Source information: Chemical mapping of a 177-nucleotide RNA with DMS.
RNA sequence: GGGAACGACUCGAGUAGAGUCGAAAAGAUAUGGACGAUGGGGAGAUCUAGGGUCGGAAACGACCCGAUGAUCUUUGAUCCCGCUCGUCCUAAGUCAAAGGAAGCUCUGCUUCGGCAGAGCUUCCAACAAACAUUUUUCCUUCGGGAAAAAUGUUUGAAAAGAAACAACAACAACAAC
Reactivity to DMS in 0.01 (KOAc 150mM, MgCl2 10mM, bicine 150mM(pH8.5), 24C), signal-to-noise 1, nucleotides 027 to 126: g000a030u000a120u050g020g020a010c000g000a020u010g010g010g000g000a020g000a000u000c000u000a250g000g010g020u000c000g010g010a040a050a130c000g030a020c010c000c010g000a010u030g000a000u000c000u000u000u000g010a080u010c000c010c090g040c250u000c000g010u000c000c000u000a010a080g000u000c030a060a140a150g010g000a020a030g000c030u000c000u000g010c000u000u000c190g010g030c030a000g000a000g010c010u000u000c000c000a060a090

Source: RMDB library TTRDEL, as collected in RNAgym.